[RMDB]
RNA sequence: GGGAACGACUCGAGUAGAGUCGAAAAGUGGAAGGAGAAUCUUUAUUGAUGGCACUAAGGGAUAUCGCAUUAUCCUCGGGUUCAGCCUGUACAUCUGCUUCCCUAGAACCUUCUUAUGUUUUACAUACGCAUUAAAUCGGUUCGCCGAUUUAAUGCGAAAAGAAACAACAACAACAAC
Reactivity to 2A3 in 0.01 (KOAc 150mM, MgCl2 10mM, bicine 150mM(pH8.5), 24C), signal-to-noise 2, nucleotides 027 to 126: g080u120g010g010a000a000g020g060a030g010a020a070u000c010u000u130u030a190u140u160g090a050u040g030g000c080a020c090u080a110a110g010g000g010a010u020a030u090c140g070c160a000u090u040a000u030c000c010u010c040g000g000g000u090u130c030a030g020c000c020u010g060u110a070c000a030u010c000u020g030c000u080u020c040c000c000u010a030g010a090a040c000c000u050u070c040u060u200a160u080g090u000u120u040u140a040c050a090u070a080
Reactivity to DMS in 0.01 (KOAc 150mM, MgCl2 10mM, bicine 150mM(pH8.5), 24C), signal-to-noise 3, nucleotides 027 to 126: g000u010g000g000a030a000g000g010a090g010a070a110u000c030u000u010u010a150u030u000g000a040u000g000g000c030a100c080u040a140a110g000g000g000a000u000a000u000c300g020c210a120u010u000a000u000c000c020u000c130g040g000g040u000u000c240a120g030c020c000u000g000u000a080c110a040u000c000u000g000c250u000u000c000c000c010u000a080g000a030a130c010c020u000u000c020u010u010a030u000g000u010u020u000u010a050c080a100u000a120